[RMDB]
RNA sequence: GGGAACGACUCGAGUAGAGUCGAAAACGAGGGGCUUUCGAGCCCCUCGAUAAUCCUAAGUCCUUGAUGACCUUGCACUCGCGAGGAUCAAUCGGAAACGAUUGGGAGCGAAACAAGCAAGAGGAUAUGGAACUUCACUGUGGAUUCGUCCACAGUGUAAGCGUUAUUGUUUCGACAAUAACGCUUAAAAAGAAACAACAACAACAAC
Reactivity to 2A3 in 0.01 (KOAc 150mM, MgCl2 10mM, bicine 150mM(pH8.5), 24C), signal-to-noise 1, nucleotides 027 to 156: c030g000a000g000g020g010g040c050u060u080u080c070g030a010g000c000c010c000c000u000c000g000a000u000a000a000u010c000c000u040a160a040g050u020c010c000u090u040g060a170u100g110a300c030c000u010u000g000c060a070c110u000c010g000c000g020a270g030g000a000u000c000a000a010u010c000g050g000a110a150a050c010g000a000u000u020g000g000g020a000g010c020g000a020a200a000c030a070a000g010c010a120a090g040a010g030g020a010u040a060u170g050g020a110a070c010u040u030c040a010c010u010g000u010g020g000a010u060u020c170g050u040c070c000a000c010a010g020u040g020
Reactivity to DMS in 0.01 (KOAc 150mM, MgCl2 10mM, bicine 150mM(pH8.5), 24C), signal-to-noise 3, nucleotides 027 to 156: c020g020a050g050g010g070g040c020u020u000u010c250g020a060g000c030c000c020c010u010c000g010a020u000a080a120u000c010c000u000a090a200g020u000c000c000u000u010g010a140u000g000a080c300c010u000u000g010c000a160c200u010c040g040c020g010a120g020g000a070u010c000a010a000u010c020g000g000a150a120a280c010g010a010u000u000g000g000g010a140g040c030g020a040a170a040c010a040a030g000c020a060a100g000a020g010g010a050u000a230u000g010g040a070a160c040u000u000c000a020c000u000g070u000g010g010a070u000u000c290g040u000c010c000a000c010a000g000u010g020